RNA sequence: GGGAACGACUCGAGUAGAGUCGAAAACAGCUGGCUAAUAUCAUAAUUAACGAAGUUGGUGCGACGUCUGCAAAGUUUAAUCGGAACAUUUACCAGCGAUGUGAUGGCAUCGUUACGAAGAUCACAACAUUAGUACUAGCUUCGGCUAGUACUAAUGAAAAGAAACAACAACAACAAC
Reactivity to DMS in 0.01 (KOAc 150mM, MgCl2 10mM, bicine 150mM(pH8.5), 24C), signal-to-noise 5, nucleotides 027 to 126: c080a120g010c030u000g010g030c040u010a040a030u000a060u010c130a090u010a100a050u000u020a060a090c040g010a070a130g020u010u000g000g010u000g010c060g010a090c090g010u000c020u000g020c110a070a060a110g000u000u000u010a070a080u010c070g000g000a100a070c080a050u000u000u000a100c050c030a050g000c030g000a060u000g010u000g000a080u000g010g000c050a040u000c060g020u000u010a070c090g010a060a090g000a070u000c070a030c140a080a150
Reactivity to 2A3 in 0.01 (KOAc 150mM, MgCl2 10mM, bicine 150mM(pH8.5), 24C), signal-to-noise 4, nucleotides 027 to 126: c010a020g000c020u040g020g000c040u060a060a030u070a080u140c070a060u030a250a090u170u090a040a030c090g050a110a010g050u070u060g020g000u040g010c010g040a030c020g060u030c010u050g000c010a070a000a100g010u070u080u100a050a050u100c050g020g000a070a030c000a050u060u030u030a050c040c010a000g000c000g010a020u050g020u020g050a170u110g060g000c020a020u020c010g020u020u030a040c060g030a070a020g050a080u080c040a010c000a160a050